[RMDB]
RNA sequence: GGGAACGACUCGAGUAGAGUCGAAAAGCCGAUCCCCUGACGAGCCCAAGGCAGGGCGAAACCAGUCGUUGCCUCGGUUGAUAAGGCUGGCUCCCUGGCAUGGGAGCGCCGCAUGGGCCAAGUGUGGACCAAGAGGUCGAUUCGUCGACCUCUUGGUAAAAGAAACAACAACAACAAC
Reactivity to DMS in 0.01 (KOAc 150mM, MgCl2 10mM, bicine 150mM(pH8.5), 24C), signal-to-noise 1, nucleotides 027 to 126: g030c020c040g040a090u010c020c020c000c050u020g000a170c080g000a100g000c030c080c030a060a090g020g010c010a050g000g010g030c080g020a110a090a210c110c040a040g010u000c020g020u000u010g000c000c040u000c100g000g000u000u010g000a080u010a030a170g000g000c000u000g000g010c000u020c020c000c010u000g020g010c260a230u000g020g000g000a020g020c000g020c000c010g000c100a040u000g010g000g050c030c040a040a090g020u010g020u000g000g000
Source: RMDB library VIROID, as collected in RNAgym. The record gives the reactivity of an RNA of 177 nucleotides to DMS. For DMS the reverse transcriptase was MarathonRT. Reactivities are given for positions 27 through 126. The RNA was probed in 150 mM KOAc, 10 mM MgCl2 and 150 mM bicine (pH 8.5) at 24 C.